RNA sequence: GGGAACGACUCGAGUAGAGUCGAAAAGAGAGGAUCUGCUCCUAGUACGAGAGGACCAGAGUGGACUUACCGCUGGUGUACCAGUUGUCUUGCCAAAGGCAUCGCUGGGUAGCUAUGUAGGGAAGGGCCUGGCGUGGAGUUUCGACUCCACGCCAGGAAAAGAAACAACAACAACAAC
Reactivity to DMS in 0.01 (KOAc 150mM, MgCl2 10mM, bicine 150mM(pH8.5), 24C), signal-to-noise 1, nucleotides 027 to 126: g040a110g010a120g000g010a090u000c060u010g020c120u000c040c010u000a090g030u000a110c100g000a090g000a120g000g000a100c040c070a100g040a070g000u010g010g000a120c070u000u000a090c070c030g000c030u010g000g010u000g010u010a260c020c010a030g010u030u000g000u000c000u020u000g000c230c300a000a040a060g020g010c020a010u000c150g010c080u000g000g000g000u030a290g000c050u010a010u010g060u020a020g010g000g010a140a060g000g020g000
The record gives the reactivity of an RNA of 177 nucleotides to DMS. For DMS the reverse transcriptase was MarathonRT. For DMS, 649 sequencing reads were counted. The RNA was probed in 150 mM KOAc, 10 mM MgCl2 and 150 mM bicine (pH 8.5) at 24 C.